The data come from the RNA Mapping Database (RMDB), libraries RFM100 and RFMREP.
This 177-nucleotide RNA was probed chemically with 2A3 and DMS.
Reactivities are rounded to 0.1 and cut off at 0 and 3.
The RNA was probed in 150 mM KOAc, 10 mM MgCl2 and 150 mM bicine (pH 8.5) at 24 C.

RNA sequence: GGGAACGACUCGAGUAGAGUCGAAAAAGUUCGUUAAUGGCUGAACGCCUCUAAGUCAGAAACGAUUCUAGAAACUGUAAAUUUACUGCUAAGAGCGUGGAUGUUGUAGGUAACAUUAGACUAUGGGAACGUCCUUUACUUUCGAGUAAAGGACGUUAAAAGAAACAACAACAACAAC
Reactivity to 2A3 in 0.01 (KOAc 150mM, MgCl2 10mM, bicine 150mM(pH8.5), 24C), signal-to-noise 2, nucleotides 027 to 126: a000g040u020u030c000g000u040u010a160a000u000g030g020c070u060g050a110a010c030g020c050c000u020c020u050a010a010g030u000c000a000g020a060a000a060c010g010a030u010u150c010u040a100g070a140a140a080c010u040g040u160a040a050a020u150u070u170a110c050u070g030c050u050a080a000g010a000g040c020g000u050g010g000a040u100g000u090u090g000u040a000g000g000u020a030a000c000a070u050u020a040g040a040c050u020a040u120g100g000g000
Reactivity to DMS in 0.01 (KOAc 150mM, MgCl2 10mM, bicine 150mM(pH8.5), 24C), signal-to-noise 4, nucleotides 027 to 126: a050g010u020u000c030g020u000u000a070a170u010g000g010c000u000g000a130a100c100g020c020c040u000c050u010a120a030g010u000c010a010g010a190a060a010c020g010a070u030u030c020u020a090g020a090a080a100c100u000g010u030a050a080a120u010u020u030a080c060u040g030c080u040a090a060g000a080g000c050g010u000g000g000a060u010g000u010u020g010u000a040g010g000u010a020a020c040a060u000u010a090g010a100c100u000a030u020g010g020g020